[RMDB]
RNA sequence: GGGAACGACUCGAGUAGAGUCGAAAAGAUAUGGAGUGCCUGUGCGAUGAAAUGUAUCAGGUCGGAAACGACCUGAGUACAUGGAGCAUUGGCACUCCUAAGUCAAAGUCCGGCUUCGGCCGGACAAGGCUAUAGUCUAGUUCGCUAGACUAUAGCCAAAAGAAACAACAACAACAAC
Reactivity to DMS in 0.01 (KOAc 150mM, MgCl2 10mM, bicine 150mM(pH8.5), 24C), signal-to-noise 3, nucleotides 027 to 126: g000a030u000a300u000g010g020a000g010u000g000c010c000u000g030u020g010c000g000a130u000g000a090a140a020u000g020u020a070u000c000a010g010g000u000c000g000g000a090a130a220c000g030a000c000c010u000g000a020g010u010a010c010a020u000g020g000a080g000c000a020u000u000g010g000c000a000c000u000c000c000u000a000a070g000u000c030a140a170a180g000u000c000c000g000g020c010u010u000c270g020g000c010c000g020g020a010c000a010a030
Reactivity to 2A3 in 0.01 (KOAc 150mM, MgCl2 10mM, bicine 150mM(pH8.5), 24C), signal-to-noise 2, nucleotides 027 to 126: g020a010u050a040u110g000g000a000g000u000g000c000c030u040g020u010g040c050g180a300u090g110a260a300a000u020g080u010a020u030c000a000g000g020u000c010g020g010a040a080a030c020g010a000c000c000u010g000a000g010u020a000c000a010u020g040g070a100g000c000a010u000u010g000g000c000a010c000u000c000c000u000a000a010g010u010c000a050a010a030g010u010c020c000g020g020c010u060u090c260g190g000c020c010g000g000a000c000a000a030